[RMDB]
An RNA of 177 nucleotides, treated with 2A3 and DMS and read out base by base.
Source: RMDB library OK1LIB, as collected in RNAgym.
For 2A3, 11,332 sequencing reads were counted.
DMS adducts were read by reverse transcription with MarathonRT.
Values are in units of 0.01, from 0 to 300, in steps of 10.
RNA sequence: GGGAACGACUCGAGUAGAGUCGAAAACUUCGUGAAAAUGCGGCGAUGGAUCAGGUCUAUCGGGAUCCAACCGAAAUAUCGUUACUAGGAGAGGAAUAAAUCAAGAUAGGGAGGCUAUCAUAGAAAGAAGCGGUAUGUUUUUCGAAGCAUGCCGCUUAAAAGAAACAACAACAACAAC
Reactivity to 2A3 in 0.01 (KOAc 150mM, MgCl2 10mM, bicine 150mM(pH8.5), 24C), signal-to-noise 4, nucleotides 027 to 126: c010u070u040c010g050u020g060a020a020a020a020u090g020c020g000g000c010g030a020u020g020g000a020u010c010a010g000g100u010c010u090a130u070c050g030g030g030a020u000c020c010a020a160c000c000g020a010a050a000u070a020u040c040g030u030u030a050c030u030a020g050g010a020g010a010g020g040a050a050u110a060a090a030u070c060a050a020g020a020u030a010g020g000g000a040g040g000c000u020a030u030c020a050u050a090g080a040a090a010g080
Reactivity to DMS in 0.01 (KOAc 150mM, MgCl2 10mM, bicine 150mM(pH8.5), 24C), signal-to-noise 9, nucleotides 027 to 126: c040u000u020c060g010u020g010a060a080a090a080u020g010c050g000g000c060g010a090u020g000g000a030u000c030a080g000g010u010c080u020a090u020c030g000g000g010a040u010c030c030a080a150c040c010g020a050a080a070u030a080u020c050g010u000u010a070c050u010a070g000g010a070g010a080g010g010a080a060u020a050a080a080u020c070a090a050g000a060u010a050g000g010g000a080g000g000c020u000a040u000c050a070u020a070g000a070a070a080g010